[RMDB]
RNA sequence: GGGAACGACUCGAGUAGAGUCGAAAAUGAAGACCUCCGUCCUUGGAGCCACUGGUAGAGAGUGUUGUCUACAAGGGAUGUCUCAGACAUUAAAUCAGUUGGUUUAAACCUAUGUCUGCAGGCAAUCCGCGAUCAUUAAUUUCGAUUAAUGAUCGCGAAAAGAAACAACAACAACAAC
Reactivity to 2A3 in 0.01 (KOAc 150mM, MgCl2 10mM, bicine 150mM(pH8.5), 24C), signal-to-noise 2, nucleotides 027 to 126: u090g010a030a060g070a090c000c020u110c050c050g100u070c020c000u040u030g000g000a000g000c010c000a020c000u020g180g090u300a090g050a000g010a040g130u030g010u090u250g060u090c010u020a010c040a020a030g040g020g040a050u060g000u000c000u000c010a030g000a000c030a040u080u140a090a070a060u120c040a040g280u130u130g140g000u070u090u110a220a190a070c020c000u030a020u030g000u000c000u010g000c050a020g000g020c000a000a080u010c050
Reactivity to DMS in 0.01 (KOAc 150mM, MgCl2 10mM, bicine 150mM(pH8.5), 24C), signal-to-noise 3, nucleotides 027 to 126: u020g020a120a120g010a130c100c020u000c080c040g000u010c050c020u000u010g020g000a040g010c010c010a020c060u010g010g000u000a090g000a120g010a080g020u000g010u000u000g020u010c010u000a060c060a050a090g010g010g010a100u000g020u010c020u000c000a020g000a010c000a040u000u000a030a070a040u000c050a230g010u010u030g010g010u000u000u000a050a050a210c200c170u010a090u000g010u000c000u000g020c220a010g000g000c010a030a100u000c050